RNA sequence: GGGAACGACUCGAGUAGAGUCGAAAACAGGUUUACGGUGUCAGCCCUGGUUUGGUACAUAACCUGAUUGGGAUGCUUCAGACCAUUGCCGAUGGCAAGGCACACUUUACCGAGACAAUUAAGCCUGCCCUGAGAACAAUUUCGAUUGUUCUCAGGGAAAAGAAACAACAACAACAAC
Reactivity to 2A3 in 0.01 (KOAc 150mM, MgCl2 10mM, bicine 150mM(pH8.5), 24C), signal-to-noise 4, nucleotides 027 to 126: c010a010g030g040u020u070u090a100c120g050g000u010g040u070c030a040g020c000c040c000u060g000g040u020u000u020g050g020u120a060c050a160u140a120a180c000c010u100g060a250u090u230g020g000g000a030u090g040c070u010u040c050a060g020a100c020c010a090u030u090g020c020c020g180a180u120g030g000c010a040a060g010g030c030a030c010a010c040u090u120u110a070c030c000g040a020g010a050c110a090a130u100u080a060a000g050c010c000u040g060
Reactivity to DMS in 0.01 (KOAc 150mM, MgCl2 10mM, bicine 150mM(pH8.5), 24C), signal-to-noise 3, nucleotides 027 to 126: c040a070g000g020u010u000u000a060c200g000g000u000g000u000c130a110g010c060c030c140u000g000g010u000u000u020g000g010u000a060c110a050u000a090a100c020c010u010g000a150u000u010g000g010g000a080u000g000c050u000u000c030a060g000a080c030c020a120u000u000g020c000c080g000a120u010g030g010c040a080a120g000g020c050a040c140a100c090u000u000u010a100c050c030g000a180g000a090c130a080a110u010u000a020a090g010c010c000u000g000
Conditions: 150 mM KOAc, 10 mM MgCl2 and 150 mM bicine (pH 8.5), 24 C. Structure probing data (2A3 and DMS) for a 177-nucleotide construct. It was measured as part of the RMDB library OK2TRN. 2A3 adducts were read by reverse transcription with SuperScript II with manganese. DMS adducts were read by reverse transcription with MarathonRT.